[RMDB]
RNA sequence: GGGAACGACUCGAGUAGAGUCGAAAACACAUGAGAUGUACUGGGUCUCUGGGGCAAAGAGCAACAUCAUAAAAAGUGUGUCCACCACAAGUCAGCUCCUCCUGGGACGCAUGGAUGGCCCCAGGAGAAGCUGUUGCAUAUUCGUAUGCAACAGCUUAAAAGAAACAACAACAACAAC
Reactivity to DMS in 0.01 (KOAc 150mM, MgCl2 10mM, bicine 150mM(pH8.5), 24C), signal-to-noise 9, nucleotides 027 to 126: c030a060c060a050u010g010a110g010a050u010g010u010a110c160u010g010g010g010u000c010u000c020u000g010g020g000g000c070a070a070a060g000a050g010c030a120a050c040a040u010c030a110u010a060a070a100a120a180g000u000g010u000g000u000c030c040a160c080c030a060c150a050a080g010u010c090a090g000c040u000c060c010u000c000c000u000g000g010g000a040c060g020c080a110u010g010g010a130u000g010g000c020c000c000c000a010g000g000a010g000
Reactivity to 2A3 in 0.01 (KOAc 150mM, MgCl2 10mM, bicine 150mM(pH8.5), 24C), signal-to-noise 8, nucleotides 027 to 126: c020a000c010a040u070g040a020g010a120u040g020u090a100c130u160g070g020g200u050c010u000c010u040g040g000g040g010c040a080a070a020g020a010g010c020a030a040c000a020u050c000a010u260a100a160a020a060a060g020u030g000u000g020u030c010c030a050c010c010a050c090a110a050g110u140c050a040g040c020u020c000c010u000c000c000u000g000g000g020a050c100g030c090a060u210g180g190a120u150g090g000c010c000c000c000a000g000g000a000g000
Structure probing data (DMS and 2A3) for a 177-nucleotide construct. DMS adducts were read by reverse transcription with MarathonRT. Source: RMDB library OK2TST, as collected in RNAgym. The DMS profile rests on 14,546 reads. The RNA was probed in 150 mM KOAc, 10 mM MgCl2 and 150 mM bicine (pH 8.5) at 24 C.